Chemical mapping of a 207-nucleotide RNA with 2A3. Source: RMDB library RNAMAK, as collected in RNAgym. For 2A3, 1,028 sequencing reads were counted. 2A3 is a SHAPE reagent: it acylates the 2'-hydroxyl of flexible nucleotides of all four kinds.

RNA sequence: GGGAACGACUCGAGUAGAGUCGAAAAGGGAACUUCGGUUCCCAGGACACCUUUGUGGUGUGAACCUUAUAUGGAGGCUUAAGGGACCCAUUGGGUCCCGAGAGCCGAUGAAAUAUAAGUCCCACACCACUCUGGUAUAUAACGCAUUCGUGCGUAAGGUAACUGUUGGAUUCGUCCAACAGUUACCAAAAGAAACAACAACAACAAC
Reactivity to 2A3 in 0.01 (KOAc 150mM, MgCl2 10mM, bicine 150mM(pH8.5), 24C), signal-to-noise 1, nucleotides 027 to 156: g030g000g010a010a000c030u060u140c300g070g000u000u000c020c010c000a000g020g080a010c020a000c070c000u020u020u010g000u000g000g000u000g000u010g000a040a050c000c000u020u060a010u030a010u010g000g010a030g000g000c000u010u000a010a020g000g000g000a000c030c060c070a100u160u300g120g000g000u000c070c000c000g000a030g000a000g000c010c000g010a060u000g000a000a020a000u000a000u000a000a000g040u090c020c030c000a010c000a000c000c000a000c000u010c000u010g000g060u000a040u020a020u040a100a020c000g020c000a040u060u120c250g120u060g000c020g070u010a040a110